[RMDB]
RNA sequence: GGGAACGACUCGAGUAGAGUCGAAAAGGGGUCCUCUUGUAACAAGUAUGGGACAUGCCUCCCAUGGCUGAAGCCUCCACGGCCAUGUGAGAGGCAACAGCCCAUACCGCCCAAGAGGACGGAGGCACCCAAAGUUAGACUAUUCGUAGUCUAACAACAUCUAGUGUUCUUUCGAGAACACUAGAUGAAAAGAAACAACAACAACAAC
Reactivity to 2A3 in 0.01 (KOAc 150mM, MgCl2 10mM, bicine 150mM(pH8.5), 24C), signal-to-noise 4, nucleotides 027 to 156: g120g000g040g010u000c010c010u010c000u030u010g080u130a170a130c060a120a070g000u000a000u000g020g000g060a090c190a250u300g000c000c000u000c000c010c000a010u000g010g000c010u010g000a110a010g010c010c000u000c000c000a010c030g010g000c000c000a010u020g190u250g070a300g000a000g050g000c030a010a010c010a010g010c000c000c010a000u000a000c000c000g020c000c030c000a000a000g000a000g000g000a000c000g000g000a000g000g020c000a040c010c000c000a050a080a000g000u000u000a000g000a000c010u010a010u100u120c270g120u120a000g000u000c000u010a010a000c000a000a010
Reactivity to DMS in 0.01 (KOAc 150mM, MgCl2 10mM, bicine 150mM(pH8.5), 24C), signal-to-noise 1, nucleotides 027 to 156: g010g020g020g050u020c000c000u000c000u000u000g000u020a120a120c140a110a090g010u000a010u010g000g100g000a100c060a200u020g020c050c050u010c030c020c000a030u000g010g010c000u020g030a090a090g000c030c000u000c000c030a300c030g010g000c080c030a020u000g000u000g010a230g010a010g020g040c010a000a000c060a130g000c000c010c010a000u000a010c010c040g010c170c100c020a040a070g010a040g040g000a040c000g020g020a020g030g060c050a080c020c000c000a130a130a160g000u000u000a000g010a030c010u000a040u010u000c300g070u000a020g020u000c010u000a000a000c000a080a300